Background
An RNA of 177 nucleotides, treated with 2A3 and DMS and read out base by base. The data come from the RNA Mapping Database (RMDB), library OK2TST. For 2A3 the reverse transcriptase was SuperScript II with manganese.
RNA sequence: GGGAACGACUCGAGUAGAGUCGAAAACGGCGAUCACCUUCCAUUUGGCUCACCACCAUUUCACGCAUAUCAACCAGUGACUCAACGUUCAUAGUCAGCUCAGUCACUAAUUCUCUGAGUACACCUACAGCUACUGGAGUUUCGACUCCAGUAGCUGAAAAGAAACAACAACAACAAC
Reactivity to 2A3 in 0.01 (KOAc 150mM, MgCl2 10mM, bicine 150mM(pH8.5), 24C), signal-to-noise 1, nucleotides 027 to 126: c010g060g000c040g110a040u030c030a050c020c010u010u110c030c000a030u050u050u120g040g000c060u020c000a040c000c000a040c000c010a060u030u080u080c070a010c030g040c010a050u000a020u110c030a000a040c040c050a020g040u030g030a030c010u090c060a050a040c050g030u090u030c050a060u110a110g090u080c040a010g000c010u040c010a030g030u050c020a050c110u020a050a000u130u050c040u000c000u140g060a010g020u050a020c000a020c070c030u110a070
Reactivity to DMS in 0.01 (KOAc 150mM, MgCl2 10mM, bicine 150mM(pH8.5), 24C), signal-to-noise 2, nucleotides 027 to 126: c130g020g020c080g000a060u010c050a120c090c020u000u000c030c060a120u000u000u000g010g010c040u000c060a060c080c040a090c030c020a120u000u000u000c060a050c080g000c040a090u020a060u000c040a070a060c050c060a010g010u020g000a030c050u000c030a090a090c030g010u000u000c080a070u000a040g000u010c090a060g010c070u000c100a030g040u000c000a030c100u040a020a110u000u030c040u000c000u020g000a080g000u000a110c100a130c040c030u010a130